[RMDB]
RNA sequence: GGGAACGACUCGAGUAGAGUCGAAAAAGAGGAUUUUUAUUUGUGCAUGUGUUCCUGCAAUUGAUCUCUUUGAUGACAUUCUCAUUCAUAGAAAGCGUUUGAUUUAUGAGCGUAGGACGAAUCGCAUGUAAAUUUACUGCUUCGGCAGUAAAUUUACAAAAGAAACAACAACAACAAC
Reactivity to 2A3 in 0.01 (KOAc 150mM, MgCl2 10mM, bicine 150mM(pH8.5), 24C), signal-to-noise 2, nucleotides 027 to 126: a020g180a020g030g090a040u110u130u000u070u020a200u060u130u040g090u040g000c000a020u070g030u010g040u170u060c000c000u020g000c000a050a070u060u140g030a060u010c000u000c000u000u100u110g100a130u040g020a010c060a040u210u000c050u020c070a110u200u020c030a010u080a130g090a050a070a000g010c010g000u000u020u050g190a250u050u180u150a140u200g010a030g050c010g040u040a000g000g080a030c010g100a010a050u150c010g000c040a020u020
Reactivity to DMS in 0.01 (KOAc 150mM, MgCl2 10mM, bicine 150mM(pH8.5), 24C), signal-to-noise 2, nucleotides 027 to 126: a070g110a080g020g000a030u010u000u030u010u040a040u030u000u010g050u000g000c080a010u030g020u010g000u000u000c000c030u030g030c050a030a050u000u000g000a060u000c030u000c020u000u010u000g030a070u000g000a040c200a240u000u000c010u000c030a070u010u020c030a070u030a050g000a060a050a040g010c140g000u000u000u000g000a130u070u020u000a050u000g030a040g000c010g000u020a050g020g000a090c170g030a080a120u010c090g000c040a090u000